RNA sequence: GGGAACGACUCGAGUAGAGUCGAAAAGUACUAUGCCCGCCAUUAUUGAUGCAUGCUCCACCUCCCACUCCUUAAUAGUUGCUUUGAAGUUUCCUUACGGUGGGUUCUGCAGCGUCUUUAUCAGAAAGACCGUAAUAAGUUUCGACUUAUUACGGUCAAAAGAAACAACAACAACAAC
Reactivity to DMS in 0.01 (KOAc 150mM, MgCl2 10mM, bicine 150mM(pH8.5), 24C), signal-to-noise 5, nucleotides 027 to 126: g010u010a060c100u000a050u010g020c040c010c030g020c120c090a080u010u010a050u000u000g010a070u010g000c040a070u010g020c020u010c030c010a070c030c020u000c030c010c020a120c090u000c030c050u010u010a080a050u000a090g010u000u010g010c040u000u000u000g000a070a140g000u000u000u000c020c010u010u010a070c140g000g020u000g000g010g000u010u000c090u010g010c040a060g010c050g010u000c020u000u010u000a060u010c080a080g000a070a090a110